An RNA of 177 nucleotides, treated with 2A3 and DMS and read out base by base. For DMS the reverse transcriptase was MarathonRT. The data come from the RNA Mapping Database (RMDB), library OK2TST. For DMS, 1,140 sequencing reads were counted. 2A3 adducts were read by reverse transcription with SuperScript II with manganese. Values are in units of 0.01, from 0 to 300, in steps of 10. Conditions: 150 mM KOAc, 10 mM MgCl2 and 150 mM bicine (pH 8.5), 24 C.
[RMDB]
RNA sequence: GGGAACGACUCGAGUAGAGUCGAAAAUGCCAGCCUAUUUCAUCAGAUUUUAGAGGUCCCUUACCAAAGGAUACAGUGGGCCUACUGUUGGGUAGGUCCUCUUCUGCUUUGAAAGGAUUGGUAAUAAGCCAUUAGGACGAUUCGUCGUCCUAAUGGCAAAAGAAACAACAACAACAAC
Reactivity to 2A3 in 0.01 (KOAc 150mM, MgCl2 10mM, bicine 150mM(pH8.5), 24C), signal-to-noise 2, nucleotides 027 to 126: u070g000c010c000a000g000c000c000u190a300u130u000u030c010a010u020c010a030g060a100u110u130u100u270a120g040a020g000g060u050c040c010c000u040u060a120c070c000a080a040a020g020g000a030u030a140c020a060g010u000g030g030g070c070c020u040a000c020u040g260u300u190g190g000g000u000a000g000g000u000c020c000u000c010u030u000c010u030g110c040u010u050u010g020a020a020a000g040g020a120u020u030g020g000u050a110a050u160a160a000
Reactivity to DMS in 0.01 (KOAc 150mM, MgCl2 10mM, bicine 150mM(pH8.5), 24C), signal-to-noise 1, nucleotides 027 to 126: u000g030c030c040a050g000c030c000u000a130u000u000u000c000a020u000c050a020g000a080u010u000u000u010a060g000a170g030g000u000c110c040c030u000u000a200c080c090a070a120a050g020g030a020u020a050c040a100g010u000g010g000g000c000c020u000a010c000u000g030u030u000g030g030g030u000a000g000g010u000c000c020u000c010u010u000c030u020g000c300u000u000u000g010a030a050a010g000g020a080u000u000g020g000u000a100a040u000a090a130